Overview: An RNA of 177 nucleotides, treated with 2A3 and DMS and read out base by base. The reactions ran in a buffer of 150 mM KOAc, 10 mM MgCl2 and 150 mM bicine (pH 8.5), at 24 C. 2A3 adducts were read by reverse transcription with SuperScript II with manganese. For 2A3, 6,463 sequencing reads were counted.
[RMDB]
RNA sequence: GGGAACGACUCGAGUAGAGUCGAAAAGCCCACUGGGCGGCGAAAUCAUGGUUGCCGCGAGCCAGAGCGGCGGUCUGCAACGCUUUGGUCGCGUCGUAGACGAACGGAUAGUCCGGCAAGGGCGGCAGCUCCCCUAUUUAUUCGUAAAUAGGGGAGCAAAAGAAACAACAACAACAAC
Reactivity to 2A3 in 0.01 (KOAc 150mM, MgCl2 10mM, bicine 150mM(pH8.5), 24C), signal-to-noise 4, nucleotides 027 to 126: g010c010c010c000a000c040u040g020g000g010c010g030g000c030g080a070a090a090u130c100a110u170g150g000u060u110g000c000c000g000c010g010a030g060c000c010a030g010a010g020c010g040g000c030g030g080u090c070u160g040c010a070a040c020g000c000u080u080u130g100g020u100c040g000c000g020u040c000g000u010a040g020a070c030g020a150a030c010g000g020a050u030a070g040u010c020c000g010g010c090a090a100g030g020g000c010g030g000c010a010
Reactivity to DMS in 0.01 (KOAc 150mM, MgCl2 10mM, bicine 150mM(pH8.5), 24C), signal-to-noise 6, nucleotides 027 to 126: g010c000c000c010a130c060u000g010g010g010c010g000g020c050g000a080a120a070u010c090a100u000g010g010u010u010g010c040c010g020c020g000a100g020c030c040a040g000a100g020c020g000g010c120g020g010u000c070u000g020c020a050a130c010g000c000u000u000u000g000g010u000c130g010c020g020u010c050g010u000a050g010a040c020g010a080a130c090g000g000a110u000a130g010u010c020c010g010g000c060a090a140g000g010g010c030g000g010c150a100